[RMDB]
RNA sequence: GGGAACGACUCGAGUAGAGUCGAAAAGAUAUGGAGAUUAGCUCCCUGGAGAAAGGUGUGUCGGAAACGACACAUACUCUCCCUGGAGCGACGAUCUCCUAAGUCAAAAGACAUCUUCGGAUGUCAACUAUUAGAGUUCGUUCGCGAACUCUAAUAGAAAAGAAACAACAACAACAAC
Reactivity to DMS in 0.01 (KOAc 150mM, MgCl2 10mM, bicine 150mM(pH8.5), 24C), signal-to-noise 4, nucleotides 027 to 126: g000a030u000a300u000g000g010a010g000a020u010u000a300g010c000u000c000c000c040u000g000g010a010g000a010a030a030g000g010u000g000u000g010u000c000g010g000a080a050a190c000g010a000c000a000c000a010u000a010c010u000c000u000c000c000c020u010g000g000a030g010c000g000a060c280g010a010u000c000u000c000c000u010a030a080g000u000c030a080a080a130a140g000a030c000a000u000c000u000u020c230g020g000a020u000g000u000c000a070a160
Reactivity to 2A3 in 0.01 (KOAc 150mM, MgCl2 10mM, bicine 150mM(pH8.5), 24C), signal-to-noise 2, nucleotides 027 to 126: g030a000u070a040u160g000g000a010g000a010u030u030a030g000c000u010c000c000c010u010g020g000a020g020a030a210a010g040g000u010g000u000g000u010c010g020g010a080a070a060c020g000a000c000a000c000a000u010a030c000u010c000u000c010c000c000u010g000g000a000g010c010g010a010c020g000a010u000c000u000c000c000u010a100a020g010u010c030a030a060a070a110g010a000c010a010u030c020u080u100c300g140g000a010u000g000u000c020a010a010
The record gives the reactivity of an RNA of 177 nucleotides to DMS and 2A3. The 2A3 profile rests on 8,181 reads. Conditions: 150 mM KOAc, 10 mM MgCl2 and 150 mM bicine (pH 8.5), 24 C. The DMS profile rests on 4,373 reads. For DMS the reverse transcriptase was MarathonRT.